[RMDB]
RNA sequence: GGGAACGACUCGAGUAGAGUCGAAAAGCGCGCGCCGAUCGCGUAAUGCAUCGUAAUUACGUAUACGUAGCGCAUUAAUGCUACGCGCGUAGCCGAUCGGCAUUACGGCUAGCCGUACGCGGCCGCGCAUCCAAUAAGCUUUCGAGCUUAUUGGAUGAAAAGAAACAACAACAACAAC
Reactivity to 2A3 in 0.01 (KOAc 150mM, MgCl2 10mM, bicine 150mM(pH8.5), 24C), signal-to-noise 9, nucleotides 027 to 126: g010c010g000c000g020c040g000c010c010g020a060u080c040g000c000g110u010a010a010u010g000c000a030u030c010g050u070a150a060u100u020a020c010g030u050a090u010a210c010g000u010a010g000c020g010c030a010u070u280a080a070u220g000c010u010a000c010g010c000g000c010g020u000a010g040c010c000g020a040u070c140g110g000c010a000u010u020a000c020g050g020c080u080a050g100c050c020g040u050a050c180g000c000g030g000c000c000g000c010g000
Reactivity to DMS in 0.01 (KOAc 150mM, MgCl2 10mM, bicine 150mM(pH8.5), 24C), signal-to-noise 9, nucleotides 027 to 126: g010c010g010c010g010c210g020c020c010g000a060u000c080g010c010g010u000a000a010u000g010c010a090u000c040g010u000a120a090u000u000a010c010g020u000a110u010a220c010g010u000a010g010c010g020c300a170u010u010a080a070u010g000c010u000a010c000g020c170g000c000g010u000a020g000c170c010g000a030u000c200g020g010c000a020u000u000a010c010g010g010c100u010a090g020c250c050g000u010a050c180g010c010g000g000c010c000g000c030g010
Structure probing data (2A3 and DMS) for a 177-nucleotide construct. For DMS the reverse transcriptase was MarathonRT. For 2A3, 67,749 sequencing reads were counted. It was measured as part of the RMDB library OK2TRN.